[RMDB]
RNA sequence: GGGAACGACUCGAGUAGAGUCGAAAAAGCGAUGAUACGUCAUCGCAACGAUUGCCUGAUCGUAAAACAGGAGACGGCCGUGGCCGCGACCACGUAAAAAAGCGUAACGUGGUCUACGGACCACGAAAAAAGCGCGGAACGUUCGCGUUCCGCGCAACGUUGACUAAAUGUUCGCAUUUAGUCAACGAAAAGAAACAACAACAACAAC
Reactivity to 2A3 in 0.01 (KOAc 150mM, MgCl2 10mM, bicine 150mM(pH8.5), 24C), signal-to-noise 2, nucleotides 027 to 156: a000g000c000g010a000u000g000a010u010a080c200g070u010c000a000u000c010g000c000a000a020c000g000a000u000u030g020c000c000u010g000a030u010c030g130u210a000a010a050a010c010a020g020g020a010g090a090c180g090g050c030c000g000u010g000g000c020c000g000c010g000a000c000c020a000c020g020u030a000a010a030a030a060a000g070c050g030u020a050a000c000g000u000g000g000u010c000u020a060c120g020g020a100c010c000a020c010g020a050a010a000a010a000a000g010c030g000c030g000g000a000a000c020g060u140u130c220g000c000g130u010u000c000c010g000c010g000c000a000a000

Structure probing data (2A3) for a 207-nucleotide construct. The 2A3 profile rests on 2,004 reads.